[RMDB]
RNA sequence: GGGAACGACUCGAGUAGAGUCGAAAAGCAACGCAAAGCCGCGCCAAGUGGAGUUAGCGAGAAGAGACUAGGCUUUGGUUUCUUCAAGUGAAGCGGUCACCAAUCAGGUGUGGUAGUUACCGUAAAAAUAACCGCUCUUUGUUCGCAAAGAGCGGAACAUUCGUUUUCUCUUCGGAGAAAACGAAUGAAAAGAAACAACAACAACAAC
Reactivity to DMS in 0.01 (KOAc 150mM, MgCl2 10mM, bicine 150mM(pH8.5), 24C), signal-to-noise 1, nucleotides 027 to 156: g000c010a050a100c020g030c040a040a100a160g040c040c010g070c060g000c000c050a110a150g010u010g020g050a210g000u010u000a260g000c030g000a300g000a090a010g000a050g000a020c020u000a120g020g000c180u000u000u000g020g060u020u000u000c000u000u000c000a030a300g030u010g010a130a260g000c000g000g010u030c030a040c030c010a070a090u000c100a070g000g050u010g040u000g040g010u000a090g010u000u020a060c010c020g030u000a060a030a040a160a090u010a080a080c010c050g000c010u000c000u000u000u000g030u000u000c290g080c000a020a020a000g000a010g000c000g010g010a030a040
Reactivity to 2A3 in 0.01 (KOAc 150mM, MgCl2 10mM, bicine 150mM(pH8.5), 24C), signal-to-noise 3, nucleotides 027 to 156: g030c010a020a100c040g030c060a100a100a060g020c000c010g010c010g000c000c000a100a020g020u020g030g070a080g050u300u050a000g020c020g000a040g010a020a000g010a000g000a000c000u030a040g050g300c040u190u150u190g020g000u020u020u000c000u000u000c010a040a030g010u030g040a070a020g010c010g000g200u050c020a010c020c030a060a100u120c110a120g000g060u040g010u040g040g000u050a030g030u090u090a060c050c020g040u060a000a110a000a070a080u140a050a080c000c000g000c000u020c000u010u000u000g010u020u020c100g000c110a000a000a010g000a000g000c000g000g000a000a000